[RMDB]
RNA sequence: GGGAACGACUCGAGUAGAGUCGAAAACCUUCCCCUUACGGACAAAAGCUGGUCCCGAUAGGGGCACCCACAAUAGGAUGGCAAAAGGGGACUCGGGUCCGUCGUUCCAUCCUUUUCUUACCUUUUGCAUGUCUAAGAUCUUCGGAUCUUAGACAUGAAAAGAAACAACAACAACAAC
Reactivity to DMS in 0.01 (KOAc 150mM, MgCl2 10mM, bicine 150mM(pH8.5), 24C), signal-to-noise 3, nucleotides 027 to 126: c030c030u000u000c010c010c010c030u000u000a300c300g000g030a030c000a080a060a130a100g030c200u010g010g000u010c020c000c010g010a160u000a080g010g010g010g030c130a020c010c000c010a090c200a080a080u000a030g010g000a050u000g010g010c150a030a030a080a120g010g000g020g000a040c000u000c230g000g020g000u000c010c050g000u000c040g010u010u000c000c000a020u010c010c010u000u010u020u010c110u000u010a150c160c040u000u000u000u000g020
Reactivity to 2A3 in 0.01 (KOAc 150mM, MgCl2 10mM, bicine 150mM(pH8.5), 24C), signal-to-noise 3, nucleotides 027 to 126: c010c000u030u060c000c000c000c000u000u040a000c000g010g010a010c010a010a220a040a050g090c110u130g080g030u010c000c000c000g060a060u090a080g030g000g000g000c000a030c000c020c000a050c040a010a090u050a130g020g000a020u000g020g000c080a010a020a090a100g060g030g000g010a010c000u030c170g300g000g050u010c010c030g110u060c020g040u090u010c000c000a000u000c000c000u010u020u070u050c040u070u090a100c010c000u030u060u010u080g160
Record summary
The record gives the reactivity of an RNA of 177 nucleotides to DMS and 2A3. The reactions ran in a buffer of 150 mM KOAc, 10 mM MgCl2 and 150 mM bicine (pH 8.5), at 24 C. The data come from the RNA Mapping Database (RMDB), library 15KREP. Reactivities are rounded to 0.1 and cut off at 0 and 3.